RNA sequence: GGGAACGACUCGAGUAGAGUCGAAAAUCAGAAUCAGACCGGAGUGUUUAGCGCUCCGUAAACACGGUCGUACAUCCAGCCGGUAGCCUGGUUCCUUGCAUUGAGUGAUGUACGGAGUUUAUAGAGCAAAAGAAAGACCUGUUCGCAGGUCUUUCAAGUUAUUGGUACACUUCGGUGUACCAAUAACAAAAGAAACAACAACAACAAC
Reactivity to DMS in 0.01 (KOAc 150mM, MgCl2 10mM, bicine 150mM(pH8.5), 24C), signal-to-noise 2, nucleotides 027 to 156: u010c040a110g010a070a080u020c030a000g000a090c020c020g020g000a150g040u000g040u000u000u010a160g030c110g010c000u000c000c020g030u000a010a030a060c040a150c050g010g020u000c020g060u010a050c030a020u000c000c060a300g020c020c050g020g020u000a090g030c100c000u000g030g010u010u000c020c040u000u000g020c120a140u000u000g010a200g040u000g000a050u010g000u000a030c040g040g000a110g030u010u000u000a070u010a080g010a070g020c050a100a060a060a180g000a010a010a030g000a010c010c000u000g030u000u010c300g020c020a020g000g010u000c000u010u000u000c000a020a140
Reactivity to 2A3 in 0.01 (KOAc 150mM, MgCl2 10mM, bicine 150mM(pH8.5), 24C), signal-to-noise 4, nucleotides 027 to 156: u070c010a010g070a030a030u040c010a020g050a040c030c010g020g010a060g040u120g060u110u130u240a160g080c050g000c020u010c010c010g000u010a000a010a000c110a020c050g110g060u090c010g010u030a000c000a030u000c010c020a020g040c010c030g020g050u030a030g020c010c000u020g010g000u040u050c010c010u070u100g040c040a110u070u150g070a050g100u190g020a020u000g000u010a010c020g040g000a050g000u070u100u020a110u080a020g060a010g040c020a040a050a060a060g000a000a000a000g000a000c000c000u010g040u030u060c210g000c080a000g000g000u020c000u000u000u010c000a000a000
The data come from the RNA Mapping Database (RMDB), library M2RFOK. Structure probing data (DMS and 2A3) for a 207-nucleotide construct. For 2A3 the reverse transcriptase was SuperScript II with manganese. As a SHAPE reagent, 2A3 marks flexible, mostly unpaired nucleotides at the ribose 2'-OH. The reactions ran in a buffer of 150 mM KOAc, 10 mM MgCl2 and 150 mM bicine (pH 8.5), at 24 C.